Notes
An RNA of 177 nucleotides, treated with 2A3 and DMS and read out base by base.
RNA sequence: GGGAACGACUCGAGUAGAGUCGAAAACUUUCACCUGUCGGACUAGUUACCUCAGAACUAUUUGGGCUACGACUGCCCAGGCGAUUGGAAAUUAUAGGAAAUUCGGACUGGAUGCCUCAGGAGGACCGUGGUCCUCCCCUUUCGAGGGGAGGACCACAAAAGAAACAACAACAACAAC
Reactivity to 2A3 in 0.01 (KOAc 150mM, MgCl2 10mM, bicine 150mM(pH8.5), 24C), signal-to-noise 1, nucleotides 027 to 126: c020u050u110u050c050a060c070c030u030g030u090c100g010g020a060c060u020a000g020u020u070a140c000c010u020c070a010g030a160a070c070u100a120u070u070u060g020g000g010c020u090a080c140g220a010c060u050g000c000c020c020a010g060g010c020g000a010u060u120g100g060a070a000a060u250u110a090u130a080g140g010a070a000a090u060u090c080g040g030a020c020u020g000g050a050u090g090c030c010u000c000a010g070g000a040g010g030a030c000c110
Reactivity to DMS in 0.01 (KOAc 150mM, MgCl2 10mM, bicine 150mM(pH8.5), 24C), signal-to-noise 1, nucleotides 027 to 126: c070u000u010u010c050a090c070c000u000g010u020c070g000g020a110c060u000a080g020u000u010a080c100c050u010c080a060g010a090a070c140u000a110u010u000u000g030g000g010c020u000a120c160g030a150c130u000g030c060c000c010a020g020g000c050g020a070u000u010g050g010a080a090a100u000u010a140u010a090g000g000a070a060a080u000u010c060g010g040a140c080u000g020g010a050u000g010c020c020u000c020a180g020g000a070g030g000a070c220c110

High DMS reactivity at an A or C suggests that its Watson-Crick edge is free. For 2A3, 869 sequencing reads were counted. For DMS, 842 sequencing reads were counted. For DMS the reverse transcriptase was MarathonRT. The reactions ran in a buffer of 150 mM KOAc, 10 mM MgCl2 and 150 mM bicine (pH 8.5), at 24 C.